Structure probing data (2A3 and DMS) for a 177-nucleotide construct.
Values are in units of 0.01, from 0 to 300, in steps of 10.
For DMS, 1,036 sequencing reads were counted.
The data come from the RNA Mapping Database (RMDB), library OK1LIB.
Conditions: 150 mM KOAc, 10 mM MgCl2 and 150 mM bicine (pH 8.5), 24 C.
RNA sequence: GGGAACGACUCGAGUAGAGUCGAAAAACAUUUUUGGCCUCUCUAUUAAUAUAUCAUUUUAGCUAGAGCCAAAUGCAAUCACAGAGACACAAAUGUUCUUUGCUUCAUGAGUGCCCUCUGAAAAGUAAUCCACUCAUGCAUUCGUGCAUGAGUGGAUAAAAGAAACAACAACAACAAC
Reactivity to 2A3 in 0.01 (KOAc 150mM, MgCl2 10mM, bicine 150mM(pH8.5), 24C), signal-to-noise 2, nucleotides 027 to 126: a000c090a100u100u080u010u020u010g010g000c000c000u000c000u000c000u000a030u040u060a180a060u120a070u030a120u220c050a030u040u020u050u040a010g000c040u020a000g000a020g000c000c000a020a000a000u110g030c040a020a070u100c000a000c010a110g010a000g060a030c000a000c010a030a050a100u030g050u100u080c050u160u210u130g150c110u030u020c010a020u050g010a000g030u030g030c030c090c000u000c000u010g100a000a000a130a000g080u130a040
Reactivity to DMS in 0.01 (KOAc 150mM, MgCl2 10mM, bicine 150mM(pH8.5), 24C), signal-to-noise 1, nucleotides 027 to 126: a050c030a090u020u000u000u040u000g010g000c020c000u000c000u000c030u000a000u020u010a080a100u000a140u100a100u060c060a010u010u000u000u000a050g000c070u040a050g040a040g020c010c000a000a000a000u060g000c140a000a130u030c140a300c040a010g000a000g000a300c020a010c080a130a010a030u000g000u000u000c120u030u010u050g040c070u110u000c000a000u000g000a300g000u000g010c030c010c030u000c000u000g000a060a020a100a090g000u050a130